[RMDB]
RNA sequence: GGGAACGACUCGAGUAGAGUCGAAAAAAAUGGCCAAGGCCCAGGAUGGCACCUUCUCCAGCGUGCUCACACUGACCAACCUCACUGGGCUAGACACGGGAGAAUACUUUUGCACCCACAAUGACUCCCGUGGACUGGAGACCGAUGAGCGGAAACGCGUGAAUAUAUUUUUCGAAAUAUAUUCACGAAAAGAAACAACAACAACAAC
Reactivity to DMS in 0.01 (KOAc 150mM, MgCl2 10mM, bicine 150mM(pH8.5), 24C), signal-to-noise 2, nucleotides 027 to 156: a050a050a040u000g000g050c010c030a090a150g010g020c020c020c010a060g020g030a160u000g010g040c040a090c050c060u010u000c040u000c040c030a060g020c070g040u010g030c020u000c070a100c050a100c110u000g010a060c050c000a120a080c100c000u000c020a090c040u010g010g000g020c010u010a040g010a120c030a020c010g010g020g010a050g040a110a110u010a160c190u010u010u000u000g020c050a110c150c060c070a120c040a070a060u020g000a160c010u000c000c010c010g040u000g000g010a050c030u000g000g010a110g040a090c010c010g080a060u010g010a090g020c020g010g000a070a070a060c060g000
Reactivity to 2A3 in 0.01 (KOAc 150mM, MgCl2 10mM, bicine 150mM(pH8.5), 24C), signal-to-noise 3, nucleotides 027 to 156: a000a000a020u130g070g010c050c010a080a030g070g020c030c020c010a030g000g050a120u090g030g000c020a060c010c000u040u040c060u020c020c020a020g000c030g110u040g000c000u060c030a050c000a010c030u070g060a110c020c070a070a100c010c000u060c030a080c030u040g010g000g010c000u000a010g010a010c000a000c010g000g060g010a020g030a080a090u180a180c050u130u130u040u120g030c060a120c010c010c000a020c040a030a060u070g010a010c000u000c020c000c010g000u000g000g000a010c000u020g000g020a010g010a010c000c050g140a150u110g020a040g070c050g020g090a100a030a010c060g020
Overview: The record gives the reactivity of an RNA of 207 nucleotides to DMS and 2A3. Source: RMDB library OK3TST, as collected in RNAgym. Reactivities are given for positions 27 through 156. Conditions: 150 mM KOAc, 10 mM MgCl2 and 150 mM bicine (pH 8.5), 24 C.